[RMDB]
This 307-nucleotide RNA was probed chemically with DMS and 2A3. The 2A3 profile rests on 228,422 reads. The DMS profile rests on 360,463 reads. For DMS the reverse transcriptase was MarathonRT.

RNA sequence: GGGAACGACUCGAGUAGAGUCGAAAAGUAGUCUGUGUCGUACCGAUAGCAGGUACGACCCUACUCGUAGUACUGUAUGUGUGCUACGCGUGAGUUCAGCAUGUCAUUGAUGCUGAAGCAUGACUCAGGUGCCACUCUCACUUGAGAAAGUUAUACAGAGUGGGUAUGACUUCAUGCCACUGGGUCAAUGACACUCAGUGCUCACGGGAGCUCGACAUACAUGAGUUUCAGUAGGAACGGUACUGCUAUCGUACCGUUACAGACUAGGAGUUCAGUUCGCUGAAUUCAAAAGAAACAACAACAACAAC
Reactivity to DMS in 0.01 (KOAc 150mM, MgCl2 10mM, bicine 150mM(pH8.5), 24C), signal-to-noise 9, nucleotides 027 to 266: g010u000a010g010u000c000u000g010u000g010u000c000g010u000a010c010c000g000a030u000a130g020c020a030g010g010u000a000c000g000a000c010c000c000u000a000c000u000c020g020u000a010g010u000a020c020u000g020u000a030u020g000u000g000u000g000c000u000a010c000g010c010g010u000g000a020g000u000u000c000a010g000c010a010u000g000u000c010a050u020u000g000a010u000g000c000u000g000a010a020g000c010a000u000g000a100c300u000c010a010g000g020u010g000c040c020a050c050u000c030u000c190a030c010u000u000g010a200g000a110a030a030g000u000u010a070u010a110c200a050g000a040g020u000g000g000g000u010a040u000g000a020c150u010u000c010a010u000g000c020c010a020c010u000g000g000g000u000c000a010a170u020g010a010c000a000c000u000c000a010g010u000g000c010u000c010a010c010g000g000g000a010g010c010u000c010g010a010c020a200u010a010c020a010u000g000a030g000u000u000u000c010a020g010u000a010g000g000a010a010c000g000g000u000a000c000u000g000c090u010a040u000c020g000u000a000c000c000g010u000u000a010c000a010g000a020c000u000a020g000
Reactivity to 2A3 in 0.01 (KOAc 150mM, MgCl2 10mM, bicine 150mM(pH8.5), 24C), signal-to-noise 9, nucleotides 027 to 266: g090u040a000g000u000c000u000g000u000g000u000c000g000u000a000c010c000g040a080u170a140g090c060a020g010g000u010a000c000g000a000c000c000c000u000a000c000u010c020g000u010a010g010u020a010c020u050g170u300a100u060g050u040g000u000g010c000u010a030c010g000c000g010u000g000a000g000u000u000c000a000g000c000a010u010g010u010c030a110u050u060g000a000u010g010c000u000g000a000a000g000c000a000u000g010a010c000u000c020a010g050g030u070g130c030c030a090c020u040c000u010c010a020c010u010u010g010a010g050a080a090a010g030u060u050a050u020a120c070a030g090a040g150u130g070g100g010u040a040u020g010a010c020u030u010c030a000u000g000c000c000a000c010u000g010g000g000u010c030a050a300u300g000a000c000a000c000u010c000a000g000u000g000c000u000c000a000c000g000g010g000a000g000c000u000c000g030a010c040a190u300a030c010a010u080g010a010g010u010u020u010c000a000g000u000a000g000g010a000a000c000g000g000u010a000c010u020g080c040u080a090u100c030g000u000a000c000c000g000u000u000a000c000a000g000a000c000u000a000g010